[RMDB]
RNA sequence: GGGAACGACUCGAGUAGAGUCGAAAAGAUAUGGAUAUACAAGACAUGCUGACCAGUCGGAAACGACUGACCAGCAACAGCUUGAUAUCCUAAGUCAAACCAAUAAGAAGUUCGCUUCUUAUUGGAACACAUGCAUGUGCUUCGGCACAUGCAUGUGAAAAGAAACAACAACAACAAC
Reactivity to 2A3 in 0.01 (KOAc 150mM, MgCl2 10mM, bicine 150mM(pH8.5), 24C), signal-to-noise 1, nucleotides 027 to 126: g000a030u000a020u100g030g000a000u020a040u100a280c050a010a020g070a030c120a210u300g000c050u020g070a020c020c030a010g020u000c000g040g000a070a070a000c030g040a040c000u030g010a010c050c020a010g000c070a090a050c030a050g040c000u020u000g010a010u000a010u050c000c000u000a030a010g010u000c050a120a060a130c000c000a010a010u010a000a000g000a020a000g030u090u300c300g080c120u000u000c000u060u000a010u000u000g000g060a150a010
Reactivity to DMS in 0.01 (KOAc 150mM, MgCl2 10mM, bicine 150mM(pH8.5), 24C), signal-to-noise 1, nucleotides 027 to 126: g020a010u000a060u000g000g000a000u000a020u010a180c010a010a020g010a010c040a300u010g040c000u000g140a010c010c010a070g020u000c000g010g020a010a040a080c000g000a000c000u000g010a010c010c000a040g020c000a070a060c200a090g050c000u000u000g000a040u000a000u000c050c000u020a000a050g000u000c010a200a290a170c000c030a010a010u000a000a000g010a000a000g060u000u100c300g010c000u010u000c000u000u000a000u000u000g000g000a100a070
Chemical mapping of a 177-nucleotide RNA with 2A3 and DMS. For DMS, 792 sequencing reads were counted. For 2A3 the reverse transcriptase was SuperScript II with manganese.